RNA sequence: GGGAACGACUCGAGUAGAGUCGAAAAGUGUGAAGUGAGGCUCCCCCUUACGAGCACGAAUUACAUGGGAGUGUUAACAUUACUGGGCGCCAGGAGCCCUACCUGGACAAGUAGCGAAGUACGGCCCGUGUAUGAGCUACGACUAAUUACGGGCACACAUCAUAGGACGGUUCGCCGUCCUAUGAUGAAAAGAAACAACAACAACAAC
Reactivity to DMS in 0.01 (KOAc 150mM, MgCl2 10mM, bicine 150mM(pH8.5), 24C), signal-to-noise 1, nucleotides 027 to 156: g030u000g000u000g010a050a270g010u000g010a000g060g000c060u020c030c030c200c000c010u000u000a050c060g000a300g030c030a070c070g020a110a160u000u000a030c150a140u000g060g000g000a110g100u000g020u000u010a020a170c080a110u000u000a090c060u000g020g030g040c040g110c000c010a050g020g000a140g000c020c030c020u000a000c000c030u020g010g010a140c100a030a140g040u000a030g000c020g030a200a100g190u000a100c030g000g020c000c030c020g000u000g000u000a030u000g020a300g030c020u000a020c000g010a140c030u010a040a070u000u000a000c090g030g010g070c000a250c040a000
Reactivity to 2A3 in 0.01 (KOAc 150mM, MgCl2 10mM, bicine 150mM(pH8.5), 24C), signal-to-noise 2, nucleotides 027 to 156: g020u010g000u000g100a050a020g000u010g020a010g020g000c010u080c010c000c000c000c000u000u060a010c030g000a000g000c010a000c040g000a040a080u200u130a090c070a080u080g050g010g020a060g030u090g020u130u100a150a040c070a160u020u260a120c020u100g020g000g150c080g060c000c020a020g010g020a000g000c000c000c000u000a000c000c000u000g010g030a020c050a140a020g000u010a010g030c000g010a090a030g000u010a020c030g030g030c010c000c080g000u010g010u010a010u130g010a010g000c010u010a030c020g100a060c040u190a070a070u120u040a020c010g000g000g020c010a010c010a000